[RMDB]
RNA sequence: GGGAACGACUCGAGUAGAGUCGAAAAGAUAUGGAAAGUAGCAUCGAUCGGUAGGUCGGAAACGACCUGACCGGGAGCUAUUUUCCUAAGUCAAAGGCUUAUCCACACUUCGGUGUGGAUAAGCCAACCACCAAUUUAAGUUCGCUUAAAUUGGUGGAAAAGAAACAACAACAACAAC
Reactivity to 2A3 in 0.01 (KOAc 150mM, MgCl2 10mM, bicine 150mM(pH8.5), 24C), signal-to-noise 1, nucleotides 027 to 126: g010a010u040a010u040g010g000a010a020a000g020u010a000g030c100a300u150c090g300a250u050c000g050g000u010a010g010g010u000c000g000g020a020a010a020c000g000a000c000c000u000g080a030c000c000g060g040g000a000g000c000u000a010u000u000u000u000c000c000u000a020a010g020u010c030a110a090a040g010g000c020u000u000a000u030c000c000a000c000a010c010u090u150c300g150g000u000g000u000g000g010a020u000a000a000g000c000c010a000a000
Reactivity to DMS in 0.01 (KOAc 150mM, MgCl2 10mM, bicine 150mM(pH8.5), 24C), signal-to-noise 3, nucleotides 027 to 126: g010a020u000a240u010g000g000a020a010a010g020u000a010g010c000a200u000c120g010a090u020c000g000g000u000a020g000g010u000c000g010g000a050a040a130c010g010a010c000c000u010g010a020c000c000g010g020g000a030g000c000u000a010u000u000u000u000c000c000u000a010a070g000u000c030a110a140a110g000g010c000u010u000a000u000c000c000a000c000a000c000u000u010c180g030g020u000g010u000g000g000a010u000a000a000g010c000c010a000a030

Structure probing data (2A3 and DMS) for a 177-nucleotide construct.
Source: RMDB library TTRDEL, as collected in RNAgym.